[RMDB]
RNA sequence: GGGAACGACUCGAGUAGAGUCGAAAAGUGAUUGACAGAGCUUUGAGAGUUUUACUGGCCGUCAAAUUUGGUUCUCGACCCGCUGUCACCAAUUACGCUGCUUUUUCCUUUUUAUUAACUCCUAUACCUCAUAGACCCAUUUCGAUGGGUCUAUGAGAAAAGAAACAACAACAACAAC
Reactivity to DMS in 0.01 (KOAc 150mM, MgCl2 10mM, bicine 150mM(pH8.5), 24C), signal-to-noise 3, nucleotides 027 to 126: g020u020g010a070u020u020g000a080c060a070g010a160g010c030u010u000u040g000a090g020a060g000u000u010u010u010a050c050u000g010g010c030c020g020u030c030a080a080a100u000u040u000g000g010u000u000c030u020c030g000a120c050c030c040g000c040u000g010u000c030a110c110c020a060a070u020u000a100c080g020c030u020g010c020u000u000u000u000u000c010c040u000u000u010u040u010a050u050u020a060a100c100u000c020c010u010a080u020a120c150
Reactivity to 2A3 in 0.01 (KOAc 150mM, MgCl2 10mM, bicine 150mM(pH8.5), 24C), signal-to-noise 5, nucleotides 027 to 126: g070u080g070a120u110u090g020a020c050a040g060a020g070c010u160u070u100g100a080g000a000g080u040u000u090u130a080c040u040g050g000c020c020g040u080c020a020a070a120u150u110u070g070g000u050u020c030u020c060g040a070c000c010c020g020c040u040g050u060c000a010c030c000a030a030u090u040a020c060g010c030u010g010c000u050u030u010u020u060c010c000u040u060u040u070u030a150u060u100a070a030c030u030c010c000u060a090u080a180c010